[RMDB]
Chemical mapping of a 177-nucleotide RNA with 2A3 and DMS.

RNA sequence: GGGAACGACUCGAGUAGAGUCGAAAAUGAAUAUGCAGGCGUCGGUGUGGCGAUGGAUAACGCUAUUCCUUCGGUGAAAGAAGUGGCGAACUUUGUCACCAAAUCCAACCUUGAAGAUGGCGUAGCGCUAUCCAAUCAUCUUCGGAUGAUUGGAUAGAAAAGAAACAACAACAACAAC
Reactivity to 2A3 in 0.01 (KOAc 150mM, MgCl2 10mM, bicine 150mM(pH8.5), 24C), signal-to-noise 7, nucleotides 027 to 126: u080g030a020a050u150a070u240g060c030a020g230g020c030g030u050c050g040g060u140g070u100g090g000c010g010a030u050g040g030a040u070a150a010c010g000c010u010a040u090u110c040c000u030u050c050g090g020u090g050a090a070a080g030a050a010g020u010g010g000c030g010a110a070c090u120u120u110g010u020c000a000c010c000a020a040a030u030c010c010a040a050c010c010u050u180g040a050a030g030a040u060g020g000c020g010u020a020g040c040g000
Reactivity to DMS in 0.01 (KOAc 150mM, MgCl2 10mM, bicine 150mM(pH8.5), 24C), signal-to-noise 7, nucleotides 027 to 126: u010g010a110a120u000a070u010g000c030a070g010g010c070g020u000c040g020g020u000g020u000g010g010c030g010a050u000g000g000a080u010a070a120c020g010c010u000a030u000u000c090c020u000u000c050g010g010u010g010a070a060a060g010a150a100g010u000g010g010c060g000a070a090c190u000u010u000g010u000c020a020c010c020a050a130a110u010c040c070a050a090c050c040u000u010g010a040a070g000a070u000g010g010c040g010u000a060g010c080g000
For DMS, 11,344 sequencing reads were counted.